[RMDB]
RNA sequence: GGGAACGACUCGAGUAGAGUCGAAAAGGGGUCAGCAACUUUUGACGCCAUCGCAGAUAAACGGAUGGACUGAAGCCUCCACGGUCCUUCAGUCCGUUUGUAGAUGGCGAUAAGUUGCUGACGGAGGCACCCAAAGUGUCCGAUUCGUCGGACACAACAUCUGCCAAACCUUCGGGUUUGGCAGAUGAAAAGAAACAACAACAACAAC
Reactivity to 2A3 in 0.01 (KOAc 150mM, MgCl2 10mM, bicine 150mM(pH8.5), 24C), signal-to-noise 2, nucleotides 027 to 156: g240g000g020g000u000c000a010g000c010a000a010c020u040u080u140u300g270a200c110g000c000c000a000u000c010g000c060a030g040a300u300a150a180a010c000g000g000a010u120g010g000a000c000u000g010a100a000g010c010c000u030c030c000a030c000g000g050u060c020c060u170u210c070a040g120u030c000c000g000u000u010u020g060u040a110g000a000u010g010g000c000g010a010u000a070a000g000u010u000g000c000u000g000a000c000g000g000a000g020g000c040a090c000c000c000a010a110a000g000u010g000u000c000c000g020a000u020u020c210g060u020c000g130g000a000c000a000c000a000a000
This 207-nucleotide RNA was probed chemically with 2A3. For 2A3 the reverse transcriptase was SuperScript II with manganese.